[RMDB]
Conditions: 150 mM KOAc, 10 mM MgCl2 and 150 mM bicine (pH 8.5), 24 C. Chemical mapping of a 207-nucleotide RNA with 2A3 and DMS. For DMS, 3,849 sequencing reads were counted. DMS (dimethyl sulfate) methylates the pairing face of unpaired adenines and cytosines.
RNA sequence: GGGAACGACUCGAGUAGAGUCGAAAAAUCCAAUUCAGGUUAGCCAUUCGUUAGCGUGUCGGUUCGCAGGCGGUGGUGAAAUUAAAGAUCGACUAAGCAUGUAGUACCAAAGAUGAAUGGUUUUCGGACGGGGGUUCAACUCCCCCCAGCUCCACCACAUAUAAGGUACCUUCGGGUACCUUAUAUGAAAAGAAACAACAACAACAAC
Reactivity to 2A3 in 0.01 (KOAc 150mM, MgCl2 10mM, bicine 150mM(pH8.5), 24C), signal-to-noise 3, nucleotides 027 to 156: a000u010c010c000a030a030u140u120c090a050g050g030u020u090a000g000c000c000a010u120u120c120g020u050u120a070g030c030g030u090g030u050c030g020g000u030u030c020g020c040a040g000g010c020g020g000u040g000g000u020g030a030a030a050u190u230a110a070a020g050a020u030c010g000a020c030u040a080a040g050c030a020u110g050u120a140g060u030a130c020c030a060a050a020g060a030u070g000a010a070u000g010g000u030u050u080u090c060g020g000a010c010g030g000g000g000g010u040u100c030a020a030c050u060c000c000c000c000c000c000a020g000c030u000c000c000a040c000c010a030
Reactivity to DMS in 0.01 (KOAc 150mM, MgCl2 10mM, bicine 150mM(pH8.5), 24C), signal-to-noise 2, nucleotides 027 to 156: a100u000c010c010a110a220u010u010c090a100g000g030u010u000a060g020c010c010a010u010u000c020g050u000u000a080g020c100g060u000g000u020c050g020g000u000u000c050g010c040a200g010g030c040g000g050u000g000g040u010g000a060a060a150u000u010a060a090a110g010a050u010c030g020a070c010u010a160a140g000c030a110u000g020u000a060g020u010a110c040c070a100a130a120g010a070u010g010a090a070u000g000g010u000u000u000u010c080g030g010a120c080g010g010g020g060g010u000u010c120a100a090c020u010c030c000c000c000c000c000a050g040c050u040c010c010a070c030c000a180